[RMDB]
Chemical mapping of a 177-nucleotide RNA with 2A3.
For 2A3 the reverse transcriptase was SuperScript II with manganese.
Values cover nucleotides 27 to 126.
It was measured as part of the RMDB library OK1LIB.
Reactivities are rounded to 0.1 and cut off at 0 and 3.
RNA sequence: GGGAACGACUCGAGUAGAGUCGAAAAGCGCCGUGCCGAUCACUGCUGCGGUCUGGGUCACGCUGUUGCCGCUGUCGGCAAUGGCGCGGGCGAUGCCGAAAUCCAUCACCUUUACUGCAUUGGUCGCACGCUUCAAGCUCUUCGGAGCUUGAAGCGUAAAAGAAACAACAACAACAAC
Reactivity to 2A3 in 0.01 (KOAc 150mM, MgCl2 10mM, bicine 150mM(pH8.5), 24C), signal-to-noise 3, nucleotides 027 to 126: g010c020g000c010c010g000u000g060c050c030g010a100u130c000a020c050u050g000c030u090g030c040g000g030u120c060u140g040g030g130u050c030a000c070g010c000u030g030u030u080g000c050c000g050c300u200g210u300c030g030g000c000a000a040u020g000g010c000g000c040g000g000g020c000g050a020u170g030c020c000g070a040a040a000u040c050c000a060u060c020a050c000c000u070u060u190a090c000u020g060c030a020u020u050g020g020u060c030g000c030